[RMDB]
RNA sequence: GGGAACGACUCGAGUAGAGUCGAAAAGAUAUGGAAACCUGUUUAACCCACGAACUACCGGUGUCGGAAACGACACGGGCGUGGGAAGGGUUUCCUAAGUCAAAAGGCUAAGGUUCGCCUUAGCCAACUCAUGAUCUAUGUUCGCAUAGAUCAUGAGAAAAGAAACAACAACAACAAC
Reactivity to DMS in 0.01 (KOAc 150mM, MgCl2 10mM, bicine 150mM(pH8.5), 24C), signal-to-noise 5, nucleotides 027 to 126: g010a050u010a300u010g010g000a010a020a010c010c010u000g000u010u010u000a120a200c010c000c000a010c010g000a140a060c110u010a220c020c010g020g020u000g020u000c000g010g000a100a080a180c000g000a010c000a010c000g000g000g000c010g020u000g010g000g010a010a030g000g010g000u000u000u000c000c000u000a020a070g000u000c030a060a090a100a100g000g010c000u000a010a010g020g010u000u010c240g010c010c000u000u000a000g000c000c000a030a030
Reactivity to 2A3 in 0.01 (KOAc 150mM, MgCl2 10mM, bicine 150mM(pH8.5), 24C), signal-to-noise 5, nucleotides 027 to 126: g010a010u080a020u110g000g010a010a000a000c010c000u030g200u100u300u240a190a220c000c030c010a000c010g040a130a120c080u270a110c210c020g220g040u040g000u020c010g000g040a080a060a070c010g000a010c010a010c000g030g000g020c010g000u000g010g000g010a010a040g000g000g000u000u010u000c000c000u000a070a010g030u010c020a000a020a050a210g010g000c000u000a000a000g030g040u060u110c270g150c030c000u000u000a000g000c030c000a000a010
This 177-nucleotide RNA was probed chemically with DMS and 2A3. Values cover nucleotides 27 to 126. For DMS, 6,675 sequencing reads were counted. The reactions ran in a buffer of 150 mM KOAc, 10 mM MgCl2 and 150 mM bicine (pH 8.5), at 24 C. As a SHAPE reagent, 2A3 marks flexible, mostly unpaired nucleotides at the ribose 2'-OH.